Conditions: 150 mM KOAc, 10 mM MgCl2 and 150 mM bicine (pH 8.5), 24 C.
The record gives the reactivity of an RNA of 207 nucleotides to DMS and 2A3.
Values are in units of 0.01, from 0 to 300, in steps of 10.
For 2A3, 1,335 sequencing reads were counted.
For DMS, 2,857 sequencing reads were counted.
RNA sequence: GGGAACGACUCGAGUAGAGUCGAAAAAUGGUAGUUAGUCUACUCGCUAUCCUAGUUACUUUGGAGUAAUCUAAAGUGUGUGUAAACGGGCGAAAGUCUGUACAAUACUGGGGACAUAGGGUCAACAAGAACUAGUAGACCUUCGGGUCUACUAGAACCUAAAGCUGAUCUUCGGAUCAGCUUUAGGAAAAGAAACAACAACAACAAC
Reactivity to DMS in 0.01 (KOAc 150mM, MgCl2 10mM, bicine 150mM(pH8.5), 24C), signal-to-noise 2, nucleotides 027 to 156: a100u020g010g020u000a030g010u000u000a160g000u000c010u010a020c010u000c060g040c070u010a090u000c010c000u000a140g010u020u000a010c010u000u010u000g020g000a060g030u030a080a180u000c010u000a020a010a030g020u000g030u000g020u000g020u000a050a060a130c070g030g030g010c020g020a170a120a170g020u000c010u000g020u000a040c020a110a080u000a030c060u000g010g010g000g000a040c110a140u000a070g010g030g030u010c030a100a090c070a050a110g020a080a200c010u000a010g010u000a040g000a030c010c020u010u010c300g060g040g010u010c000u010a000c010u000a000g000a050a090
Reactivity to 2A3 in 0.01 (KOAc 150mM, MgCl2 10mM, bicine 150mM(pH8.5), 24C), signal-to-noise 2, nucleotides 027 to 156: a000u030g000g030u030a030g020u080u100a050g060u050c010u040a040c020u020c030g040c040u050a040u070c010c000u010a050g040u040u090a020c010u020u010u040g020g010a020g010u140a140a100u030c010u010a030a020a000g020u040g000u010g010u000g020u080a130a100a070c010g000g000g000c000g050a090a000a020g010u000c010u020g040u030a010c000a050a020u020a090c000u050g030g000g000g010a010c030a040u110a020g030g000g030u020c020a000a050c010a210a040g090a100a030c000u000a000g000u000a000g000a000c010c000u010u030c110g090g000g000u000c000u000a000c000u000a000g000a000a000